[RMDB]
RNA sequence: GGGAACGACUCGAGUAGAGUCGAAAAAGGACGCGUCUCGGCGGCUCGGCGGUCGUUGGCGGACGCAGCGCCGCCGCCGUCUCACAACGUACUUGUCGACGUGGACGGCCUGCGGUGCGAGGUGCGCGCACCUGGAGUCGUUCGCGAUUCCAGGUGCAAAAGAAACAACAACAACAAC
Reactivity to 2A3 in 0.01 (KOAc 150mM, MgCl2 10mM, bicine 150mM(pH8.5), 24C), signal-to-noise 9, nucleotides 027 to 126: a000g150g010a040c050g010c020g060u010c010u020c040g040g000c010g020g000c030u030c070g130g010c090g020g010u070c020g010u020u050g090g020c040g020g020a010c030g000c040a010g000c000g000c000c000g000c010c010g000c000c000g000u000c020u130c010a050c010a060a130c030g080u140a140c110u200u220g160u250c060g020a060c060g010u020g000g010a000c000g010g010c030c040u060g000c020g030g000u020g030c000g010a040g020g030u080g040c030g000c010
Reactivity to DMS in 0.01 (KOAc 150mM, MgCl2 10mM, bicine 150mM(pH8.5), 24C), signal-to-noise 9, nucleotides 027 to 126: a070g000g000a110c040g010c040g000u000c030u010c030g000g010c020g000g000c040u000c090g010g010c120g010g000u010c020g020u010u010g010g030c030g000g000a030c020g000c020a160g000c020g010c000c000g010c010c300g010c010c010g010u000c000u040c060a030c040a140a300c020g000u020a060c220u040u030g010u010c040g010a040c280g000u000g010g000a010c010g000g010c050c070u020g010c020g000g020u000g000c010g000a060g000g010u010g000c030g000c100